The record gives the reactivity of an RNA of 207 nucleotides to 2A3.
RNA sequence: GGGAACGACUCGAGUAGAGUCGAAAACGGUCCUGCCAUGAGACCGUAACGAGGACAUGUCGCCUCGAAUGGCGUCGGGGAGCCGGCAGCUUACCCCAAGGAAGAGCGCCUAAUGCCGGUACCCGGGUAUACGCUACCCCGUUCGCGGGGUAGCGAAGAUACUACCUCCGUUCGCGGAGGUAGUAUCAAAAGAAACAACAACAACAAC
Reactivity to 2A3 in 0.01 (KOAc 150mM, MgCl2 10mM, bicine 150mM(pH8.5), 24C), signal-to-noise 2, nucleotides 027 to 156: c000g000g000u000c010c020u030g010c030c000a040u080g040a040g000a030c000c020g040u030a020a000c010g010a010g000g020a020c060a160u200g020u220c160g010c010c010u000c000g010a000a000u030g000g020c010g100u090c000g000g010g000g000a160g110c000c020g010g000c000a010g000c000u010u100a100c020c010c020c090a050a100g050g030a100a120g030a010g040c020g040c020c120u130a120a010u050g000c020c000g030g000u010a030c000c030c000g030g000g020u300a210u030a030c030g030c000u000a000c000c010c010c000g050u060u060c150g000c020g070g000g000g000u000a000g000c010g000a010a000